Chemical mapping of a 177-nucleotide RNA with DMS and 2A3. For 2A3 the reverse transcriptase was SuperScript II with manganese. Source: RMDB library OK2TRN, as collected in RNAgym.
[RMDB]
RNA sequence: GGGAACGACUCGAGUAGAGUCGAAAAUCGUCCAGGCCGCCGGAGACGAAGCUGAUCACUUCGUUGCGCCGCGUCUCCGGCGCGAUGAAGUCGGGGUUGGCGUGAUAGUGGGCCAGCAGCUUGUCGGCUUGUGUAAAUACUUCGGUAUUUACACAAGAAAAGAAACAACAACAACAAC
Reactivity to DMS in 0.01 (KOAc 150mM, MgCl2 10mM, bicine 150mM(pH8.5), 24C), signal-to-noise 9, nucleotides 027 to 126: u010c090g010u000c050c030a140g010g010c110c020g020c010c010g010g000a070g010a030c020g010a060a050g010c020u000g010a080u000c090a140c070u000u010c150g010u010u000g010c060g010c010c170g010c080g000u000c020u000c030c000g000g000c000g000c040g010a040u000g010a050a060g010u000c060g010g000g000g010u000u000g010g000c030g020u010g000a080u010a080g020u000g010g010g010c040c020a040g010c030a070g000c040u000u000g010u000c040g000g000
Reactivity to 2A3 in 0.01 (KOAc 150mM, MgCl2 10mM, bicine 150mM(pH8.5), 24C), signal-to-noise 7, nucleotides 027 to 126: u050c010g030u000c010c010a040g040g060c040c030g000c010c010g020g010a020g000a020c020g020a030a020g020c040u050g030a090u100c030a030c100u180u090c120g100u100u060g010c020g000c020c000g010c020g060u020c030u010c020c000g020g000c010g000c000g000a010u080g080a040a020g050u070c060g010g040g000g060u040u060g020g010c080g020u040g060a090u090a140g100u120g060g070g020c010c000a010g010c000a010g000c030u060u090g080u110c020g040g030